[RMDB]
RNA sequence: GGGAACGACUCGAGUAGAGUCGAAAAAAAAAAGAUAUGGAACGUACCUCUUCCGACGAAGUACGUAACAUCCAGGUCGGAAACGACCUGGUGGUACAGAGGAAAGUACGUUCCUAAGUCAAAAAAACCAUUAUAAGAUGUUCGCAUCUUAUAAUGGAAAAGAAACAACAACAACAAC
Reactivity to DMS in 0.01 (KOAc 150mM, MgCl2 10mM, bicine 150mM(pH8.5), 24C), signal-to-noise 4, nucleotides 027 to 126: a000a040a050a090a080a070g000a010u000a040u010g000g000a010a000c000g010u000a000c070c300u000c300u000u000c010c020g000a210c230g010a100a090g000u000a000c000g010u000a010a010c180a030u000c000c000a010g000g000u000c000g010g000a010a000a020c000g000a010c000c000u000g000g010u000g000g000u000a010c010a020g000a040g020g010a020a020a070g000u000a000c000g000u000u000c000c000u000a010a050g000u010c000a010a000a050a140a060a070a170

Structure probing data (DMS) for a 177-nucleotide construct.